[RMDB]
RNA sequence: GGGAACGACUCGAGUAGAGUCGAAAACAGUGAUGGAAACAUCACUGAAAAACGUGUGAGCGCAUCACGAAAAAGUCGAUCGAAUACCGAUCGACAAGCGCUAAAGUCAUGCCGAAAGGCAUGACAAGGUGGUGAUCGUAUUCGUACGAUCACCACCAAAAGAAACAACAACAACAAC
Reactivity to DMS in 0.01 (KOAc 150mM, MgCl2 10mM, bicine 150mM(pH8.5), 24C), signal-to-noise 1, nucleotides 027 to 126: c000a000g000u000g000a000u000g000g000a100a000a170c000a000u000c000a000c000u000g000a010a040a010a190a260c000g000u000g000u000g000a000g000c000g000c000a300u000c000a010c000g090a000a090a020a050a020g000u000c000g000a050u000c000g000a300a300u150a130c190c000g000a000u050c000g000a000c000a050a140g000c050g000c000u000a010a280a190g050u000c000a000u000g020c000c000g000a060a170a230g000g000c010a000u050g000a000c100a050a030
Reactivity to 2A3 in 0.01 (KOAc 150mM, MgCl2 10mM, bicine 150mM(pH8.5), 24C), signal-to-noise 2, nucleotides 027 to 126: c000a000g000u000g000a000u000g000g030a010a040a000c000a000u000c000a000c000u000g000a050a020a000a000a000c010g010u020g000u000g080a060g000c000g000c000a010u040c020a000c060g200a080a060a040a000a000g000u030c000g010a000u000c000g000a040a080u140a300c130c000g010a000u000c010g000a030c000a010a010g000c000g000c000u030a070a000a000g010u000c000a000u000g010c000c010g050a060a010a000g000g000c000a000u000g000a000c000a000a030
Structure probing data (DMS and 2A3) for a 177-nucleotide construct. Values cover nucleotides 27 to 126. The reactions ran in a buffer of 150 mM KOAc, 10 mM MgCl2 and 150 mM bicine (pH 8.5), at 24 C.